[RMDB]
RNA sequence: GGGAACGACUCGAGUAGAGUCGAAAAUCGUCGCGCCAGUGCUCACCAGGCCGGUGAUAGGCUCGAUCUUGAUGGCGUACGUCCCGGCCGGCAGGAAGCGGAUGUCGCUGUCCCCAGUCACAUUGGCCCACGGAUAUCUGUUCGCAGAUAUCCGUGGAAAAGAAACAACAACAACAAC
Reactivity to 2A3 in 0.01 (KOAc 150mM, MgCl2 10mM, bicine 150mM(pH8.5), 24C), signal-to-noise 5, nucleotides 027 to 126: u080c020g040u010c040g000c000g010c080c020a060g030u050g120c030u010c040a070c050c040a040g030g010c030c010g020g000u120g030a070u140a160g050g010c010u000c060g100a230u060c070u090u280g040a110u120g060g010c020g010u080a030c020g030u030c000c000c000g020g000c020c000g000g080c030a050g020g100a050a030g030c020g020g020a060u050g030u060c030g010c040u030g080u050c030c010c000c000a020g050u060c050a050c040a270u110u170g040g010c000
Reactivity to DMS in 0.01 (KOAc 150mM, MgCl2 10mM, bicine 150mM(pH8.5), 24C), signal-to-noise 2, nucleotides 027 to 126: u030c040g100u000c060g020c150g020c030c020a200g030u060g000c020u000c070a070c110c060a180g000g000c080c000g000g050u020g000a060u020a110g000g000c020u000c080g000a070u030c100u020u070g010a050u010g000g000c000g030u030a090c170g010u000c050c000c020g000g000c000c000g000g020c010a060g000g000a130a140g000c020g000g000a150u040g010u000c050g060c010u000g010u000c020c010c000c030a090g090u020c130a120c160a120u000u010g000g020c180